[RMDB]
RNA sequence: GGGAACGACUCGAGUAGAGUCGAAAAGGAUUCUCUCACAGGAUUGUCUCUGUGUUCCGAAACUCCAACAGUAUUGCUUCGGGACACCUACAGCAAUACUGUAGGUAUAGAGAGUAGGAGAGGAUCGCCCAUAGUCAGUGUUCGCACUGACUAUGGGAAAAGAAACAACAACAACAAC
Reactivity to DMS in 0.01 (KOAc 150mM, MgCl2 10mM, bicine 150mM(pH8.5), 24C), signal-to-noise 3, nucleotides 027 to 126: g020g000a000u000u000c000u000c000u000c000a130c080a150g000g000a160u000u010g020u000c020u000c010u000g010u000g050u010u010c000c020g000a020a040a090c010u000c190c100a100a130c150a090g000u000a160u010u010g010c040u000u010c170g000g000g010a100c160a080c010c000u000a060c080a050g010c060a090a060u020a300c000u000g000u010a010g010g010u000a050u000a030g010a050g000a060g020u020a130g000g000a020g000a010g040g020a010u000c000g020
Reactivity to 2A3 in 0.01 (KOAc 150mM, MgCl2 10mM, bicine 150mM(pH8.5), 24C), signal-to-noise 3, nucleotides 027 to 126: g020g000a000u000u000c000u000c010u000c020a100c050a180g240g070a250u170u270g120u020c020u000c000u010g010u000g030u070u000c010c000g020a020a040a020c050u120c100c040a090a060c040a200g110u170a160u120u190g020c020u000u050c010g010g000g010a020c020a040c030c000u020a030c020a000g030c040a040a140u050a300c000u000g010u000a010g000g020u050a040u180a090g060a000g030a010g050u060a080g020g030a000g000a000g010g000a010u010c010g000